[RMDB]
RNA sequence: GGGAACGACUCGAGUAGAGUCGAAAAUAUUUACCUGUGCUCUUCUCAUAUUGGUAAAAAGCCACGCACAUAUAUAAUUUUCGAAAAGUUGGCAACCUGCUAUUAUAUAUUGCAGGGCGAAAUAAUAUCCUAUGACUGGAUUCGUCCAGUCAUAGGAAAAAGAAACAACAACAACAAC
Reactivity to DMS in 0.01 (KOAc 150mM, MgCl2 10mM, bicine 150mM(pH8.5), 24C), signal-to-noise 1, nucleotides 027 to 126: u020a090u070u040u000a100c030c020u000g030u000g000c110u050c080u050u000c030u030c040a090u010a090u000u000g020g000u020a000a050a110a140a180g000c000c000a010c080g020c000a040c080a010u000a030u000a080u010a020a060u010u030u000u020c060g040a050a150a040a160g000u000u000g050g020c050a030a160c090c020u020g000c000u000a010u020u000a060u000a080u040a030u020u000g000c000a040g040g050g020c050g000a140a090a110u070a080a030u030a090
Reactivity to 2A3 in 0.01 (KOAc 150mM, MgCl2 10mM, bicine 150mM(pH8.5), 24C), signal-to-noise 1, nucleotides 027 to 126: u130a080u090u190u100a050c010c000u010g070u030g080c190u150c050u160u000c000u000c000a000u070a300u300u100g040g020u050a040a040a040a040a020g000c000c000a000c040g160c010a010c120a050u110a000u070a000u000a000a300u250u170u050u040c000g110a150a000a040a040g070u070u080g000g000c000a000a170c010c070u080g010c000u110a080u300u000a080u280a250u000a000u190u030g000c000a000g010g000g000c000g000a000a070a000u150a070a090u030a040